[RMDB]
RNA sequence: GGGAACGACUCGAGUAGAGUCGAAAACAUUUGCACUCAGAGUUUUGCAAAAUAUUUGAGAUUUAGUUAAAGAAAAGGGGAAAGAAGAAUCCAGUGCUACUGACAACUGUGGUACCCAGACCAAUGACAGCAAAUGAGUCUGUGGGAUCAUCUUCAAGACUAUCCAGGGAUUCGUCCCUGGAUAGUCAAAAGAAACAACAACAACAAC
Reactivity to 2A3 in 0.01 (KOAc 150mM, MgCl2 10mM, bicine 150mM(pH8.5), 24C), signal-to-noise 1, nucleotides 027 to 156: c030a120u030u110u170g000c000a030c010u130c090a090g030a040g130u090u150u070u040g110c140a110a110a020a060u170a090u100u130u130g000a030g050a060u050u110u070a060g010u030u060a190a070a040g100a050a130a000a000g100g060g000g000a040a050a040g060a090a000g040a030a060u000c010c000a000g140u030g000c000u050a060c040u100g100a060c050a190a010c050u100g000u030g070g020u000a000c010c000c000a000g010a010c010c000a040a040u190g050a140c140a050g060c050a180a180a040u060g000a010g060u000c000u000g030u290g000g000g050a000u050c000a030u040c000u080u100c080a180a000